[RMDB]
RNA sequence: GGGAACGACUCGAGUAGAGUCGAAAAAACUCAGCUAGGGAGAGUAUAACAUUCAUGUUCACGAGACCUAGACGAAACACAGAGGAAAAUUAUUAAUCACUGGAUAGUAUUAGUAAUGACUCUGUGUAAAACUCUUCUACGUUCGCGUAGAAGAGAACAUUUCUAGAUUGUUCGCAAUCUAGAAAUGAAAAGAAACAACAACAACAAC
Reactivity to 2A3 in 0.01 (KOAc 150mM, MgCl2 10mM, bicine 150mM(pH8.5), 24C), signal-to-noise 6, nucleotides 027 to 156: a000a000c010u010c010a010g010c010u010a000g000g020g000a030g000a020g040u100a130u100a300a020c050a030u100u220c070a060u240g040u130u120c100a030c100g030a060g030a060c000c000u000a010g010a050c020g010a010a030a000c010a000c000a010g010a000g000g030a110a140a080a000u000u010a000u000u000a000a000u020c060a000c030u050g060g100a140u300a300g010u010a010u000u000a000g000u000a000a000u020g020a030c000u000c000u000g000u000g000u000a000a000a000a000c000u000c000u000u010c000u010a010c000g030u020u040c190g000c010g100u010a000g000a000a000g000a000g000a000a000
Reactivity to DMS in 0.01 (KOAc 150mM, MgCl2 10mM, bicine 150mM(pH8.5), 24C), signal-to-noise 3, nucleotides 027 to 156: a070a070c030u000c050a090g010c040u000a010g000g010g010a190g020a220g010u000a070u000a030a070c040a110u010u000c140a120u000g020u020u000c050a130c030g010a270g030a070c020c000u000a020g000a240c040g000a160a120a030c010a010c010a000g010a010g010g010a110a090a060a040u000u000a010u000u000a020a010u010c110a070c040u000g040g010a120u010a090g020u000a040u000u000a010g020u000a000a010u000g000a190c010u000c000u010g030u010g000u000a010a010a030a090c000u000c000u000u000c010u010a010c010g030u010u010c300g030c020g040u000a000g010a020a020g000a000g010a050a080